An RNA of 177 nucleotides, treated with DMS and 2A3 and read out base by base.
It was measured as part of the RMDB library OK1LIB.
For 2A3, 2,408 sequencing reads were counted.
RNA sequence: GGGAACGACUCGAGUAGAGUCGAAAAGGGCCGGCGGCGAUGGUGGUGAUGGCGGUGCCGGUGGCAAGGCUGUGUCCGGUGUGGGCCAGAACGGCAGCCAAGGGGCCGGGGGUAACGGCGGUGCCGCGGCCCCAUACUCGUUCGCGAGUAUGGGGCCAAAAGAAACAACAACAACAAC
Reactivity to DMS in 0.01 (KOAc 150mM, MgCl2 10mM, bicine 150mM(pH8.5), 24C), signal-to-noise 2, nucleotides 027 to 126: g000g000g010c040c050g000g030c080g000g040c050g000a090u010g000g030u030g020g010u010g000a150u020g000g040c030g000g000u000g030c020c010g000g050u010g010g000c110a260a140g000g020c020u000g010u030g000u010c020c020g000g000u040g040u060g020g030g000c020c020a030g000a130a060c030g010g000c000a180g000c040c020a080a150g010g000g010g020c030c020g000g000g000g010g020u020a050a090c090g000g000c090g000g030u010g000c010c000g060c080
Reactivity to 2A3 in 0.01 (KOAc 150mM, MgCl2 10mM, bicine 150mM(pH8.5), 24C), signal-to-noise 3, nucleotides 027 to 126: g050g030g010c030c020g010g000c040g000g060c060g070a100u110g070g050u080g030g040u060g000a100u100g070g040c070g050g000u050g020c010c000g030g030u010g010g040c040a080a070g060g000c030u010g050u050g080u170c020c020g010g010u220g040u160g060g130g010c010c010a010g030a100a010c050g010g000c000a010g020c000c000a020a060g070g000g000g000c010c010g010g000g010g000g010u100a060a010c060g000g020c040g000g050u050g010c000c000g030c020